[RMDB]
This 177-nucleotide RNA was probed chemically with DMS and 2A3. For DMS, 4,772 sequencing reads were counted. The data come from the RNA Mapping Database (RMDB), library OK2TRN. DMS adducts were read by reverse transcription with MarathonRT. High DMS reactivity at an A or C suggests that its Watson-Crick edge is free.
RNA sequence: GGGAACGACUCGAGUAGAGUCGAAAAGUGUUCGACCCCCACAUGCGGGAGGGGCCGGACGGGGAGCCGGCGAGAGCGCGCAACAGCGACAUUGUGGAGGACCUGGGAAUGGUAGAGUACGUGUUCAAACGAAAACCAAAUUCGUUUGGUUUUCGUUAAAAGAAACAACAACAACAAC
Reactivity to DMS in 0.01 (KOAc 150mM, MgCl2 10mM, bicine 150mM(pH8.5), 24C), signal-to-noise 4, nucleotides 027 to 126: g010u010g030u000u000c010g010a140c020c000c000c010c040a120c120a110u000g010c140g000g000g010a130g010g010g000g040c020c020g010g000a030c040g010g020g000g000a130g020c040c060g020g010c060g000a090g000a100g000c030g020c040g000c050a090a070c130a110g000c040g020a070c080a080u000u010g000u010g010g000a100g000g010a060c050c050u000g000g000g000a070a060u000g010g020u000a060g000a070g010u010a050c100g010u000g000u010u010c090a050
Reactivity to 2A3 in 0.01 (KOAc 150mM, MgCl2 10mM, bicine 150mM(pH8.5), 24C), signal-to-noise 1, nucleotides 027 to 126: g030u020g060u040u050c040g070a110c010c010c000c030c000a070c010a040u210g010c080g000g030g050a160g050g020g040g000c030c010g040g000a050c060g030g000g000g000a020g040c040c030g000g000c040g010a060g010a010g000c010g000c010g050c010a100a110c040a130g000c000g060a030c040a090u070u150g040u100g000g030a070g040g000a050c030c030u030g000g000g080a100a100u140g090g040u050a000g020a010g080u080a040c100g060u050g070u100u080c050a040